[RMDB]
RNA sequence: GGGAACGACUCGAGUAGAGUCGAAAAACAUAUUUUUAAGUAUGUGCUACAGGUGUCCUAAGGAAAUAGUAAGCACUGUGAGCGCUCUUGUCUACAAUAAUAAAUUGUUAGCCAAGAAGGAGCUUUCGGCACGCCGAGUUCGCUCGGCGUAAAAGAAACAACAACAACAAC
Reactivity to 2A3 in 0.01 (KOAc 150mM, MgCl2 10mM, bicine 150mM(pH8.5), 24C), signal-to-noise 3, nucleotides 027 to 129: a000c050a000u050a000u060u150u060u070u140a040a000g030u000a000u150g030u020g040c000u000a010c020a110g000g020u020g020u030c020c050u080a070a070g190g020a110a120a000u120a060g020u100a010a130g020c000a010c030u000g030u000g050a000g000c000g000c000u010c000u000u000g000u010c000u000a010c000a000a000u120a100a070u300a210a180a040u010u000g070u100u080a000g000c010c000a000a020g010a000a040g070g010a030g020c000u030u060u030c000g000g010c000
Reactivity to DMS in 0.01 (KOAc 150mM, MgCl2 10mM, bicine 150mM(pH8.5), 24C), signal-to-noise 3, nucleotides 027 to 129: a120c000a070u050a000u000u040u090u020u030a050a140g030u010a030u010g030u000g000c080u000a040c060a040g030g000u000g010u040c050c040u030a070a130g010g000a050a080a050u020a070g030u040a110a000g030c060a090c040u000g030u040g030a030g050c020g040c070u070c010u000u080g010u030c010u030a050c010a010a020u000a030a050u130a080a110a060u000u000g010u040u020a030g000c000c030a010a010g010a000a000g040g000a050g020c010u000u020u070c060g020g050c130